[RMDB]
RNA sequence: GGGAACGACUCGAGUAGAGUCGAAAAUGCAUCUUCGGAUGCAGCAAUGGGGUCGAGAGACGUGGAGACCGUGAACUACAGCUGAAGCCUCCACGGCUGCACGGUCGUUGAAACGUCUACUCGACGGAGGCACCCUGUACUCGUCGUUCGCGACGAAGAACUUAAAUUAAUUCGUUAAUUUAAGUUCAAAAGAAACAACAACAACAAC
Reactivity to 2A3 in 0.01 (KOAc 150mM, MgCl2 10mM, bicine 150mM(pH8.5), 24C), signal-to-noise 9, nucleotides 027 to 156: u030g000c000a000u000c010u070u090c300g150g000a000u010g000c000a000g020c030a010a200u210g010g000g010g010u010c000g000a000g000a000g000a010c010g010u010g000g010a020g000a000c010c010g000u010g000a040a100c100u260a120c300a000g000c000u020g010a050a000g000c000c000u000c000c000a010c020g010g000c000u010g000c000a000c010g000g010u000c000g030u050u020g000a000a000a000c000g000u000c000u060a190c000u000c000g060a040c040g000g000a000g000g000c000a010c000c000c000u010g030u060a090c060u010c010g000u000c000g020u040u050c240g020c040g170a030c040g020a050a070
Reactivity to DMS in 0.01 (KOAc 150mM, MgCl2 10mM, bicine 150mM(pH8.5), 24C), signal-to-noise 3, nucleotides 027 to 156: u000g030c000a010u010c000u000u020c300g020g010a010u000g010c020a030g010c100a080a050u010g000g010g040g020u000c020g020a100g020a080g010a020c010g030u000g010g000a080g010a040c000c040g000u010g010a070a120c070u010a300c020a040g010c020u010g020a090a150g000c020c000u000c020c020a300c000g010g000c000u000g000c030a040c040g030g010u010c010g020u000u000g010a180a220a020c010g010u000c000u000a040c020u000c010g020a030c010g000g030a020g010g000c000a060c020c010c000u010g010u000a060c070u000c030g030u000c010g000u010u010c160g030c020g000a070c040g000a060a140
This 207-nucleotide RNA was probed chemically with 2A3 and DMS.
The DMS profile rests on 8,390 reads.
Values cover nucleotides 27 to 156.
The RNA was probed in 150 mM KOAc, 10 mM MgCl2 and 150 mM bicine (pH 8.5) at 24 C.
Values are in units of 0.01, from 0 to 300, in steps of 10.